[RMDB]
RNA sequence: GGGAACGACUCGAGUAGAGUCGAAAAUGGAUCUGCAACAACACCAUAUAUCCGCAGAUCCUAAGGAUGUAUGGUCAACUGAUCCGAGAGGAUCUACAUUAAGGCGAAGGUCAAAUCUGCGUUAAUACCGACCUGAAGCCGAAGGUAUUAACGAACACGUGAUAUUAGGCUUCGGCCUAAUAUCACGAAAAGAAACAACAACAACAAC
Reactivity to 2A3 in 0.01 (KOAc 150mM, MgCl2 10mM, bicine 150mM(pH8.5), 24C), signal-to-noise 5, nucleotides 027 to 156: u120g000g000a010u020c020u090g040c030a080a080c010a040a050c010a100c050c020a020u030a010u020a010u020c000c020g000c020a030g010a070u030c000c000u030a090a030g000g000a000u000g000u020a010u020g000g020u040c050a080a070c100u050g000a000u000c000c020g000a020g010a010g030g010a010u000c020u050a050c070a190u140u150a090a040g020g010c030g050a040a010g010g010u020c050a030a030a090u090c120u160g040c000g000u000u000a000a000u000a010c010c010g020a030c010c030u060g070a060a010g030c000c000g010a000a000g010g010u000a000u010u000a000a000c010g010a040a010c060a010
Reactivity to DMS in 0.01 (KOAc 150mM, MgCl2 10mM, bicine 150mM(pH8.5), 24C), signal-to-noise 2, nucleotides 027 to 156: u010g040g010a050u000c020u010g050c080a140a100c180a120a120c120a080c020c030a000u000a070u000a020u000c010c010g000c110a150g000a040u000c060c000u000a040a090g000g000a000u000g010u020a000u000g030g000u020c110a060a110c070u000g010a030u000c050c000g020a220g000a300g050g000a020u000c000u010a050c110a130u020u000a110a030g010g020c010g000a120a040g010g040u000c000a090a070a230u000c040u000g000c040g030u010u000a030a040u020a060c020c010g000a210c050c000u020g010a080a170g000c070c030g070a120a150g020g020u000a030u000u000a020a050c000g000a020a050c060a140